Source: RMDB library OK2TRN, as collected in RNAgym. Structure probing data (2A3 and DMS) for a 177-nucleotide construct. The DMS profile rests on 1,380 reads. The RNA was probed in 150 mM KOAc, 10 mM MgCl2 and 150 mM bicine (pH 8.5) at 24 C.

[RMDB]
RNA sequence: GGGAACGACUCGAGUAGAGUCGAAAAUAAUAAGUCAUCAUACAUUUUUUUAGCAAUACGUGUUGCCUGUUGAAUAACACCAUCGUGAAUGUAUGCACCAGUACCUAUAUCAUCUUUUGAGUUUGGAAUGCUACCAAUACUUCGGUAUUGGUAGCAUAAAAGAAACAACAACAACAAC
Reactivity to 2A3 in 0.01 (KOAc 150mM, MgCl2 10mM, bicine 150mM(pH8.5), 24C), signal-to-noise 1, nucleotides 027 to 126: u200a030a040u030a080a030g070u060c060a080u010c020a020u080a080c020a030u090u000u010u030u060u100u040a060g060c000a050a010u030a210c080g080u140g030u100u080g010c040c000u110g070u190u080g140a230a150u060a060a000c020a050c040c030a030u040c070g070u060g060a010a060u030g040u030a040u020g020c000a010c030c000a050g080u090a050c000c020u070a070u090a030u290c030a040u050c080u000u260u120u080g040a070g070u000u030u060g010g110a110
Reactivity to DMS in 0.01 (KOAc 150mM, MgCl2 10mM, bicine 150mM(pH8.5), 24C), signal-to-noise 2, nucleotides 027 to 126: u000a140a050u010a120a120g000u000c080a050u000c040a050u010a050c030a000u010u010u000u010u010u000u030a110g010c070a110a080u010a060c180g010u000g010u000u010g020c120c070u010g010u020u020g000a130a120u000a000a050c060a060c020c060a030u000c080g020u000g040a100a030u000g000u000a020u000g000c120a050c060c060a070g000u000a070c020c020u000a030u000a060u000c030a050u010c050u000u000u000u000g030a080g000u000u010u000g010g010a090